RNA sequence: GGGAACGACUCGAGUAGAGUCGAAAAGAUAUGGAUCCCGUAUCCUUCAUCGAUCUCGGAAACGAGGGAGAAGGUACCGGGAUCCUAAGUCAAAACGUCCACAGCAUCUUCGGAUGCUGUGGACGAAGCAAUAUAGUGACUUCGGUCACUAUAUUGCAAAAGAAACAACAACAACAAC
Reactivity to 2A3 in 0.01 (KOAc 150mM, MgCl2 10mM, bicine 150mM(pH8.5), 24C), signal-to-noise 2, nucleotides 027 to 126: g040a020u050a040u150g000g000a000u010c000c030c000g010u020a100u300c010c000u050u020c020a280u300c060g110a090u000c020u010c030g000g030a150a070a040c010g000a010g000g000g000a000g000a010a000g020g000u000a020c180c000g010g010g010a000u000c000c010u010a020a010g030u000c010a020a000a120a150c030g020u020c000c000a000c000a020g010c010a000u010c010u150u280c300g130g010a000u000g000c020u020g010u000g050g000a000c000g020a010a000
Reactivity to DMS in 0.01 (KOAc 150mM, MgCl2 10mM, bicine 150mM(pH8.5), 24C), signal-to-noise 2, nucleotides 027 to 126: g000a050u000a300u000g000g000a000u000c000c010c030g000u000a220u020c030c000u000u000c000a250u000c140g000a070u010c000u000c000g010g000a190a150a140c020g000a030g000g000g000a030g000a030a000g000g020u000a110c240c030g030g000g010a010u000c000c010u000a000a080g000u010c030a100a070a130a200c000g020u000c000c020a010c020a000g010c000a020u000c000u010u010c210g030g000a010u000g000c000u000g000u000g010g000a000c000g000a010a010
The record gives the reactivity of an RNA of 177 nucleotides to 2A3 and DMS. The 2A3 profile rests on 3,590 reads. The RNA was probed in 150 mM KOAc, 10 mM MgCl2 and 150 mM bicine (pH 8.5) at 24 C. The data come from the RNA Mapping Database (RMDB), library TTRDEL. For DMS the reverse transcriptase was MarathonRT.